[RMDB]
RNA sequence: GGGAACGACUCGAGUAGAGUCGAAAAGCAUUGGUGAAAGCGGUCGACACUGUUGCUCAACGACAUCAAAAAUAUUUGUUAAUUGGCAAUAGCUAUCAUCAGGCAGAUAAAGAGCGGCACGCUAUUGCAUGACAUCAUGCUUCGGCAUGAUGUCAUGAAAAGAAACAACAACAACAAC
Reactivity to 2A3 in 0.01 (KOAc 150mM, MgCl2 10mM, bicine 150mM(pH8.5), 24C), signal-to-noise 2, nucleotides 027 to 126: g000c030a070u050u130g010g030u080g050a070a040a000g040c040g000g040u040c020g020a040c020a020c030u020g040u050u010g000c030u050c090a020a030c060g030a000c010a020u090c120a040a050a120a120a070u200a120u140u050u030g040u000u080a170a150u180u040g000g000c010a010a040u010a020g060c020u050a020u090c000a020u030c000a030g060g000c030a020g000a130u210a030a150a020g060a030g060c000g010g030c070a000c120g030c050u090a120u080u190g020
Reactivity to DMS in 0.01 (KOAc 150mM, MgCl2 10mM, bicine 150mM(pH8.5), 24C), signal-to-noise 2, nucleotides 027 to 126: g000c010a080u000u000g040g020u020g000a040a140a100g010c030g010g010u000c080g010a120c120a110c030u000g030u000u010g010c010u020c070a040a090c240g010a080c100a030u030c090a010a040a080a070a070u020a070u000u000u000g010u010u000a090a200u000u000g010g020c010a020a000u020a000g020c020u000a090u000c010a000u000c090a020g020g030c040a130g000a080u000a050a050a030g000a090g000c040g030g030c010a070c060g040c040u000a080u010u010g000